[RMDB]
RNA sequence: GGGAACGACUCGAGUAGAGUCGAAAAGAUAUGGAAAGUCGAGCUUCGAUGGACAAUGAUGUCGGAAACGAUUGAGUCCAUCGAGCGAUGAGACUUUCCUAAGUCAAAAGUCACCUUCGGGUGACAAUCCGACUUUAUACUUCGGUAUAAAGUCGGAAAAAGAAACAACAACAACAAC
Reactivity to DMS in 0.01 (KOAc 150mM, MgCl2 10mM, bicine 150mM(pH8.5), 24C), signal-to-noise 2, nucleotides 027 to 126: g010a040u010a300u000g000g000a000a000a010g010u020c000g000a140g010c010u000u010c020g030a030u000g010g020a020c000a160a100u020g010a170u000g000u000c010g000g000a070a070a180c000g000a020u020u020g000a150g000u000c000c000a010u000c020g010a000g000c000g040a080u000g040a300g000a010c000u000u000u000c000c000u000a020a110g020u000c020a070a090a120a140g020u000c010a020c000c010u000u000c200g040g000g030u000g010a010c000a030a040
Reactivity to 2A3 in 0.01 (KOAc 150mM, MgCl2 10mM, bicine 150mM(pH8.5), 24C), signal-to-noise 2, nucleotides 027 to 126: g010a010u060a030u140g020g010a010a000a000g000u010c020g000a010g010c010u300u210c050g010a000u000g010g000a000c000a090a300u200g030a020u120g040u020c010g030g000a060a080a040c000g010a030u020u090g030a000g000u020c000c000a000u000c000g000a010g000c000g000a020u080g050a060g000a010c000u010u000u000c000c000u010a060a000g000u000c000a020a040a060a150g010u000c000a010c020c000u000u060c260g140g020g000u000g010a010c000a000a040
Overview
Source: RMDB library TTRDEL, as collected in RNAgym. Chemical mapping of a 177-nucleotide RNA with DMS and 2A3. DMS adducts were read by reverse transcription with MarathonRT. Conditions: 150 mM KOAc, 10 mM MgCl2 and 150 mM bicine (pH 8.5), 24 C.